Conditions: 150 mM KOAc, 10 mM MgCl2 and 150 mM bicine (pH 8.5), 24 C. This 207-nucleotide RNA was probed chemically with DMS and 2A3. Reactivities are given for positions 27 through 156. The DMS profile rests on 10,636 reads. Source: RMDB library M2RFPK, as collected in RNAgym. DMS adducts were read by reverse transcription with MarathonRT.
RNA sequence: GGGAACGACUCGAGUAGAGUCGAAAAGCAGUAUCUCGUUAGGCGAGGCUCCUAUACAAACACAGGUUGCUGAUCUGACGACGUCGCGAGACGCCCAAGAUUAGGACAGGAUAUAUCGAACCAAGGUGAACCUGUCCAGGGUUCGCCCUGGACAGAAUCAAUCUUAGAUGUUCGCAUCUAAGAUUGAAAAAGAAACAACAACAACAAC
Reactivity to DMS in 0.01 (KOAc 150mM, MgCl2 10mM, bicine 150mM(pH8.5), 24C), signal-to-noise 5, nucleotides 027 to 156: g020c100a140g010u000a060u000c030u000c030g020u010u000a090g010g010c060g000a130g020g010c040u010c010c000u000a120u000a150c070a120a060a150c080a110c090a120g030g020u010u000g000c030u000g000a040u000c010u000g000a150c030g000a010c010g010u000c000g000c300g000a300g010a020c010g020c000c030c110a220a100g010a040u000u000a050g010g000a100c020a110g030g010a100u000a090u000a080u000c020g010a070a090c020c010a050a180g000g020u000g000a060a100c110c000u000g010u010c040c030a020g010g010g030u010u000c300g000c010c000c000u000g010g010a040c010a020g000a050a120
Reactivity to 2A3 in 0.01 (KOAc 150mM, MgCl2 10mM, bicine 150mM(pH8.5), 24C), signal-to-noise 8, nucleotides 027 to 156: g070c060a020g030u130a140u090c030u020c030g060u080u180a110g060g050c040g030a040g030g000c020u040c000c010u120a130u070a210c120a050a160a020c080a010c010a090g090g030u100u130g090c010u020g000a030u000c020u060g010a020c020g010a020c000g000u010c000g000c030g040a050g000a040c000g010c000c020c010a020a010g030a030u030u060a020g030g000a030c050a040g000g080a030u060a020u030a030u230c060g050a040a040c030c020a050a030g090g010u060g040a040a030c000c010u000g000u020c000c000a000g000g010g010u040u050c170g060c010c000c000u000g000g000a000c000a010g000a000a020